Conditions: 150 mM KOAc, 10 mM MgCl2 and 150 mM bicine (pH 8.5), 24 C. Chemical mapping of a 177-nucleotide RNA with DMS and 2A3. Values cover nucleotides 27 to 126. For DMS, 3,811 sequencing reads were counted. DMS (dimethyl sulfate) methylates the pairing face of unpaired adenines and cytosines.
RNA sequence: GGGAACGACUCGAGUAGAGUCGAAAAGUCUCCCGAUUCGUCGGGAGACCGAGAAAUUCAGGUGAUUAGCUACCUUUAAGUGCAGCUAGAAAUUCAAAGGAAACACCAUGGCGUUCGCGCCAUGGAACCACUAUUCAACUUUCGAGUUGAAUAGUGGAAAAGAAACAACAACAACAAC
Reactivity to DMS in 0.01 (KOAc 150mM, MgCl2 10mM, bicine 150mM(pH8.5), 24C), signal-to-noise 4, nucleotides 027 to 126: g000u010c000u000c000c000c000g000a020u000u010c150g030u000c000g010g000g000a010g000a000c000c010g010a120g010a300a090a110u020u000c060a060g000g010u000g000a070u000u000a170g010c010u000a040c010c030u000u000u010a070a050g030u010g010c040a030g020c190u000a050g010a080a040a100u020u000c070a060a090a080g020g000a100a040a060c170a150c010c010a010u000g000g010c000g030u000u020c180g020c010g000c000c000a000u000g000g000a050a100
Reactivity to 2A3 in 0.01 (KOAc 150mM, MgCl2 10mM, bicine 150mM(pH8.5), 24C), signal-to-noise 6, nucleotides 027 to 126: g000u000c000u000c000c000c000g000a020u020u050c150g020u010c010g040g010g000a030g000a000c000c010g030a040g100a030a160a050u250u160c070a010g020g020u020g030a270u080u070a010g000c010u010a010c010c000u110u200u250a050a010g020u030g020c010a010g000c020u110a050g180a130a180a100u230u150c080a120a110a040g110g010a110a120a010c040a030c030c000a010u000g010g000c010g010u040u050c250g000c020g000c050c000a000u000g000g000a000a000